[RMDB]
The data come from the RNA Mapping Database (RMDB), library OK1LIB. This 177-nucleotide RNA was probed chemically with DMS and 2A3. The reactions ran in a buffer of 150 mM KOAc, 10 mM MgCl2 and 150 mM bicine (pH 8.5), at 24 C.
RNA sequence: GGGAACGACUCGAGUAGAGUCGAAAAGGGAGAACCGAGCAGAGGCAUAGCGAACUGCGCACGGGGAAGCCUUGAGGGAAAGCCGUAGGACCCGGGUUCGAUUCCCGGCGGCUCCACCGAAGGGCCACAUACUACCAUAUUUCGAUAUGGUAGUAUGAAAAGAAACAACAACAACAAC
Reactivity to DMS in 0.01 (KOAc 150mM, MgCl2 10mM, bicine 150mM(pH8.5), 24C), signal-to-noise 9, nucleotides 027 to 126: g010g000g010a110g010a230a160c030c020g020a140g010c050a030g010a110g010g010c050a130u020a120g020c070g010a110a110c030u000g010c030g010c130a110c040g000g000g000g010a120a150g010c010c010u000u000g000a300g010g000g000a150a170a030g000c010c000g000u020a100g010g010a140c190c020c010g000g000g000u010u020c240g000a290u030u040c010c000c010g000g000c030g000g000c010u000c100c050a300c010c010g000a230a040g000g000g010c010c130a150
Reactivity to 2A3 in 0.01 (KOAc 150mM, MgCl2 10mM, bicine 150mM(pH8.5), 24C), signal-to-noise 9, nucleotides 027 to 126: g060g020g010a110g010a050a010c010c010g000a020g000c020a010g020a060g110g030c100a150u170a080g070c060g080a100a040c020u020g000c040g010c040a060c050g010g000g000g040a030a010g000c000c000u010u020g020a050g000g020g000a030a040a000g000c010c010g030u090a080g080g220a140c020c000c000g010g000g000u040u080c050g020a030u060u080c000c000c000g000g000c000g000g000c000u020c020c040a020c000c000g000a010a020g010g000g000c000c000a010
The 2A3 profile rests on 49,267 reads.